[RMDB]
RNA sequence: GGGAACGACUCGAGUAGAGUCGAAAAGACUCAGAAUGUGUUCACCCUCUUUCCUUCUGCCAUCGAUGCUGGAUGGCUCCCAUACGAGGAGGGGGAGUCUGCAGCUUCUCCAGAACUAGGGUCCAAAGAUGAUACGACCAUUCGUGGUCGUAUCAUCAAAAGAAACAACAACAACAAC
Reactivity to DMS in 0.01 (KOAc 150mM, MgCl2 10mM, bicine 150mM(pH8.5), 24C), signal-to-noise 2, nucleotides 027 to 126: g010a060c000u000c030a130g000a030a060u020g020u030g000u020u000c040a080c170c000c010u000c000u030u000u040c040c050u020u000c050u000g000c000c010a070u000c020g020a130u040g010c100u020g050g000a000u000g010g000c000u020c000c030c020a110u030a060c140g000a040g010g000a040g000g030g000g000g000a060g000u000c010u040g000c070a100g000c020u010u000c000u020c000c040a140g030a050a090c110u000a070g020g000g000u000c020c120a050a040a100
Reactivity to 2A3 in 0.01 (KOAc 150mM, MgCl2 10mM, bicine 150mM(pH8.5), 24C), signal-to-noise 4, nucleotides 027 to 126: g020a000c010u010c030a060g040a070a070u140g030u010g020u120u060c010a100c000c030c000u000c030u040u110u020c010c020u010u070c010u020g030c020c000a030u020c030g120a090u180g040c060u090g100g020a060u040g040g000c000u000c000c010c010a150u160a220c150g050a090g090g020a010g050g030g000g000g000a010g030u030c080u090g030c020a010g000c000u050u010c000u000c000c000a010g010a060a030c040u030a060g010g030g020u000c020c020a050a040a030